[RMDB]
RNA sequence: GGGAACGACUCGAGUAGAGUCGAAAAGACAAGUCCAGAGAAGGCACUGGGUUGGCAUCCAACAGCUUGGUCACAAGGGAUUUGGUUGUUGGGAGUGCUGGCGUCCUUGGCUAUGAUCUGACAUUUUUCUUACACCCUGGUUCGCCAGGGUGUAAGAAAAAGAAACAACAACAACAAC
Reactivity to 2A3 in 0.01 (KOAc 150mM, MgCl2 10mM, bicine 150mM(pH8.5), 24C), signal-to-noise 2, nucleotides 027 to 126: g050a000c000a000a010g030u080c030c050a020g030a000g010a060a050g000g000c090a000c170u090g030g020g020u030u080g030g010c010a010u130c010c000a000a000c000a000g000c030u060u040g000g000u010c040a080c200a270a160g160g200g030a030u120u110u100g010g000u000u010g000u000u000g040g020g030a230g040u050g030c010u000g000g020c000g190u130c000c010u020u020g060g000c010u010a040u170g040a090u000c020u040g000a030c000a010u010u000u000u060